This 207-nucleotide RNA was probed chemically with 2A3 and DMS. The DMS profile rests on 2,681 reads. The RNA was probed in 150 mM KOAc, 10 mM MgCl2 and 150 mM bicine (pH 8.5) at 24 C.
[RMDB]
RNA sequence: GGGAACGACUCGAGUAGAGUCGAAAAUGGGUUUGACAUAAUGCUGAUAGACAAACAGUAGCAUUGGGGUAUGCCCCUUACAGCGCUAGGUUCAAUAACCGACAAAGAAAAUAACGAAGUGUUGGUAGAUCCAAAUUUGAUCAUUAACCAACAAGCACUUACUAAGUGGCUUCGGCCACUUAGUAAGAAAAGAAACAACAACAACAAC
Reactivity to 2A3 in 0.01 (KOAc 150mM, MgCl2 10mM, bicine 150mM(pH8.5), 24C), signal-to-noise 2, nucleotides 027 to 156: u020g040g000g040u040u020u140g040a050c050a030u150a090a040u050g000c010u000g030a030u060a090g140a060c050a040a150a000c040a080g090u060a010g040c020a010u020u040g000g040g000g000u050a040u240g020c020c000c000c050u020u060a040c050a030g010c000g000c030u050a060g060g000u030u030c040a110a050u130a200a020c020c030g030a010c060a020a120a010g110a060a090a060a050u150a110a020c070g110a110a070g040u020g000u050u000g020g000u000a010g000a000u000c020c050a080a110a220u180u070u110g000a000u010c000a030u070u100a050a010c000c000a000a010c000a000a020g050c010a000
Reactivity to DMS in 0.01 (KOAc 150mM, MgCl2 10mM, bicine 150mM(pH8.5), 24C), signal-to-noise 2, nucleotides 027 to 156: u000g000g040g050u000u000u000g000a110c050a100u010a020a110u010g000c000u010g020a210u000a140g000a150c050a090a110a120c040a080g040u010a070g010c040a040u000u040g000g020g060g030u000a040u010g000c000c020c010c000u010u020a050c060a070g000c030g050c070u000a070g010g020u010u000c030a100a150u020a050a090c000c000g010a130c050a030a090a150g000a070a040a080a100u000a090a170c070g010a130a180g000u000g000u010u000g000g020u010a220g010a040u000c020c090a070a060a250u000u020u000g000a050u000c020a100u000u000a090a020c010c010a000a010c010a000a070g020c060a070